[RMDB]
RNA sequence: GGGAACGACUCGAGUAGAGUCGAAAAGCCAGUGAAGCAAGGAUGACAACAUGGCCCUUUGAUACUAGCUGAGGGACAGACACAGGUCCUGGGAGACCAGAGAAAGACGAGGGGCAGAGGAGGUGUCUCUGUCCUUGGUUUUCGAACCAAGGACAGAAAAAGAAACAACAACAACAAC
Reactivity to 2A3 in 0.01 (KOAc 150mM, MgCl2 10mM, bicine 150mM(pH8.5), 24C), signal-to-noise 1, nucleotides 027 to 126: g030c010c000a020g060u010g080a100a010g030c010a000a040g060g020a080u070g050a030c000a090a020c020a180u070g000g020c070c000c000u070u110u090g150a120u180a120c070u060a040g080c000u010g020a060g000g020g000a010c030a060g090a000c010a000c040a120g000g040u030c010c020u050g000g080g000a070g000a020c020c020a000g040a020g000a080a010a000g050a010c030g020a000g020g000g010g000c000a000g010a020g090g050a020g030g030u050g020u000c000
Reactivity to DMS in 0.01 (KOAc 150mM, MgCl2 10mM, bicine 150mM(pH8.5), 24C), signal-to-noise 2, nucleotides 027 to 126: g030c030c030a100g010u000g010a080a060g010c050a060a050g010g010a070u000g020a050c090a070a100c180a120u000g010g000c020c000c010u000u000u020g000a100u000a070c190u010a110g000c030u000g000a040g010g010g000a040c020a040g000a130c140a050c110a100g020g010u000c030c030u010g000g030g000a120g000a100c060c050a070g000a100g010a070a110a030g010a050c050g000a070g000g020g020g020c020a000g000a040g010g000a100g000g000u010g010u010c050
The data come from the RNA Mapping Database (RMDB), library OK2TST. The record gives the reactivity of an RNA of 177 nucleotides to 2A3 and DMS. The reactions ran in a buffer of 150 mM KOAc, 10 mM MgCl2 and 150 mM bicine (pH 8.5), at 24 C. In probing experiments dimethyl sulfate is read out at A N1 and C N3, which are open when not base-paired. 2A3 adducts were read by reverse transcription with SuperScript II with manganese.